[RMDB]
RNA sequence: GGGAACGACUCGAGUAGAGUCGAAAAGCGUACUACCUUACGCCAAUCGAGCAACAGCUGGUCACAUUUCCGAUCCCAAAUAGGAUCGGACCAUGACCAGACAUGCUCGAAAAAUGUAAGGUAUCGCAAAAGUUCACGCGGUUCGCCGCGUGAACAAGUACACCUUAGCCUUCGGGCUAAGGUGUACAAAAGAAACAACAACAACAAC
Reactivity to 2A3 in 0.01 (KOAc 150mM, MgCl2 10mM, bicine 150mM(pH8.5), 24C), signal-to-noise 1, nucleotides 027 to 156: g000c000g090u100a120c010u000a010c030c000u000u000a000c000g000c020c000a020a050u000c000g010a000g030c000a010a100c010a110g050c000u010g000g000u000c000a050c010a120u100u070u050c000c000g000a010u010c000c030c000a230a300a010u300a110g000g000a000u010c000g000g000a000c000c000a070u040g000a010c000c000a000g030a020c000a050u030g000c000u000c000g010a000a000a000a000a000u020g000u000a000a000g010g010u000a000u070c000g000c000a000a000a070a070g010u000u010c020a000c020g000c020g000g100u060u090c180g050c070c000g000c030g030u030g000a010a000c010a000a010